The record gives the reactivity of an RNA of 177 nucleotides to DMS and 2A3. It was measured as part of the RMDB library RFM100.

RNA sequence: GGGAACGACUCGAGUAGAGUCGAAAACGGGGACCCGGCACUCUCUGCCCUGACUGUUCCGGCUCCCCCAGACCGGCCCACGGGACCGCACACCCGACGGCCGGUGGUUGCUCCGGGCUGCGGUGCCCAGCUUGCGAAUUUUCGAAUUCGCAAGCUGAAAAGAAACAACAACAACAAC
Reactivity to DMS in 0.01 (KOAc 150mM, MgCl2 10mM, bicine 150mM(pH8.5), 24C), signal-to-noise 2, nucleotides 027 to 126: c100g020g000g000g000a030c190c010c020g050g020c060a030c020u000c080u000c030u000g010c130c130c080u000g000a050c090u000g010u030u000c000c030g010g020c280u010c000c000c000c000c040a050g000a080c050c010g010g010c000c000c290a300c030g000g000g000a120c030c000g000c030a080c230a110c000c020c010g010a300c300g000g000c000c020g010g010u000g000g020u010u000g000c060u010c040c000g000g010g000c300u000g010c030g000g000u010g000c000c020
Reactivity to 2A3 in 0.01 (KOAc 150mM, MgCl2 10mM, bicine 150mM(pH8.5), 24C), signal-to-noise 1, nucleotides 027 to 126: c030g000g010g020g000a000c020c000c020g010g000c050a000c000u010c000u000c040u090g060c000c020c040u010g040a010c060u040g040u070u060c000c000g000g000c000u040c050c010c010c000c010a010g050a110c020c000g000g000c010c020c030a030c020g000g060g000a090c020c040g030c030a030c010a030c030c000c000g070a070c010g000g000c000c010g050g010u030g040g000u090u120g010c020u010c010c000g010g030g000c000u030g020c020g040g030u030g050c000c000
For DMS, 2,331 sequencing reads were counted.